Structure probing data (2A3 and DMS) for a 177-nucleotide construct.

RNA sequence: GGGAACGACUCGAGUAGAGUCGAAAAAAAAAAUAGAUCGUUCUAUUAACGAUCUCGCGCGGGUCGUCGGUGGUCGGCGAGCCCACGGACGAACUUACUCGCGCGUAAGUUAAUAUAUCGCCAAAAAACCUACACAUUGAUUCGUCAAUGUGUAGGUAAAAGAAACAACAACAACAAC
Reactivity to 2A3 in 0.01 (KOAc 150mM, MgCl2 10mM, bicine 150mM(pH8.5), 24C), signal-to-noise 2, nucleotides 027 to 126: a000a000a000a060a000a000u110a000g030a020u020c010g000u050u060c150u190a280u300u210a060a010c010g000a000u000c010u010c000g010c000g000c000g000g000g020u050c010g000u000c060g140g000u030g000g010u050c090g000g030c000g020a010g000c000c030c000a010c000g050g010a000c000g000a030a020c030u150u130a030c010u050c000g000c010g010c010g000u010a010a000g000u000u040a070a010u070a030u010a020u080c000g000c010c000a020a100a020a030a010
Reactivity to DMS in 0.01 (KOAc 150mM, MgCl2 10mM, bicine 150mM(pH8.5), 24C), signal-to-noise 3, nucleotides 027 to 126: a020a060a030a050a050a090u010a010g000a010u000c000g010u000u000c280u000a100u000u020a050a000c000g000a010u010c010u000c010g020c010g010c000g020g010g020u010c020g020u000c020g000g040u000g000g000u000c040g000g010c010g030a060g000c300c000c010a010c020g020g010a010c010g010a100a120c250u000u000a110c010u000c000g000c010g010c020g010u010a000a070g010u010u000a050a050u010a130u010a050u000c020g020c000c020a010a060a020a040a100
Background
It was measured as part of the RMDB library M2PK90. DMS adducts were read by reverse transcription with MarathonRT.